[RMDB]
RNA sequence: GGGAACGACUCGAGUAGAGUCGAAAAUCUGGCUACUAGGUUUCGUGAAGGCUGACUCGGUCUACGAAACCUUAGCCAUAGACUACUUGUAGACUAGACCGAGUUAGCCUUUAGUCAUGAGUGGUCACUACAGCUUUGUAUUCGUACAAAGCUGUAGAAAAGAAACAACAACAACAAC
Reactivity to 2A3 in 0.01 (KOAc 150mM, MgCl2 10mM, bicine 150mM(pH8.5), 24C), signal-to-noise 1, nucleotides 027 to 126: u020c010u010g000g000c000u000a000c000u020a030g090g080u030u030u070c080g040u100g030a010a000g010g000c000u000g010a000c000u000c000g020g000u020c000u020a000c010g000a020a000a010c010c010u000u000a000g000c000c000a010u080a010g030a080c000u010a000c010u040u070g020u050a030g010a020c000u000a000g000a000c000c000g000a010g010u010u020a000g000c000c000u000u000u000a010g000u000c000a020u070g040a010g000u000g000g000u010c010a010
Reactivity to DMS in 0.01 (KOAc 150mM, MgCl2 10mM, bicine 150mM(pH8.5), 24C), signal-to-noise 7, nucleotides 027 to 126: u010c040u000g010g000c000u000a010c040u010a030g010g010u000u010u000c030g010u000g010a010a010g000g000c000u010g000a030c020u000c000g010g000u000c000u000a010c010g010a240a100a010c010c080u000u000a000g000c010c050a130u010a090g000a110c020u000a010c210u000u000g010u000a050g010a300c280u000a000g000a010c010c000g000a020g010u000u000a030g000c010c000u000u000u010a050g000u000c070a040u010g010a030g010u000g010g000u000c010a200